The record gives the reactivity of an RNA of 177 nucleotides to DMS and 2A3. 2A3 adducts were read by reverse transcription with SuperScript II with manganese. The 2A3 profile rests on 2,893 reads. The RNA was probed in 150 mM KOAc, 10 mM MgCl2 and 150 mM bicine (pH 8.5) at 24 C.
[RMDB]
RNA sequence: GGGAACGACUCGAGUAGAGUCGAAAAGUAGUGCUCGAGAGGGAGGCUGUCUCGCAGAGCUUUUAGAUCUUCUGAUCUUUCCCUCCUCCAUAUCGCAUAUGCGUCAAGCGAUAGACGCAUAAUUAAAUUAAUUACCAGUAUUCGUACUGGUAAUUAAAAAAGAAACAACAACAACAAC
Reactivity to DMS in 0.01 (KOAc 150mM, MgCl2 10mM, bicine 150mM(pH8.5), 24C), signal-to-noise 7, nucleotides 027 to 126: g010u000a090g020u000g000c030u000c040g010a040g010a230g010g010g010a050g010g010c070u010g010u010c010u000c040g020c120a060g010a250g010c010u000u000u000u000a010g000a010u000c010u010u010c290u000g010a010u000c000u000u000u000c000c000c000u000c020c010u000c010c020a070u010a060u010c080g010c240a130u000a010u000g000c000g000u000c000a090a150g010c180g010a100u010a060g000a010c000g010c000a000u000a010a050u010u010a040a060a120
Reactivity to 2A3 in 0.01 (KOAc 150mM, MgCl2 10mM, bicine 150mM(pH8.5), 24C), signal-to-noise 3, nucleotides 027 to 126: g020u090a010g120u030g120c040u040c090g030a030g020a040g060g060g030a010g130g050c080u070g120u090c010u000c010g000c030a020g040a040g090c000u020u020u000u020a020g000a010u020c030u290u060c150u300g010a010u000c000u020u010u000c000c000c010u010c000c010u010c010c000a070u100a050u080c050g000c150a060u010a000u080g000c000g000u010c030a040a100g130c040g140a040u090a180g000a000c000g000c010a010u030a030a030u110u150a060a050a020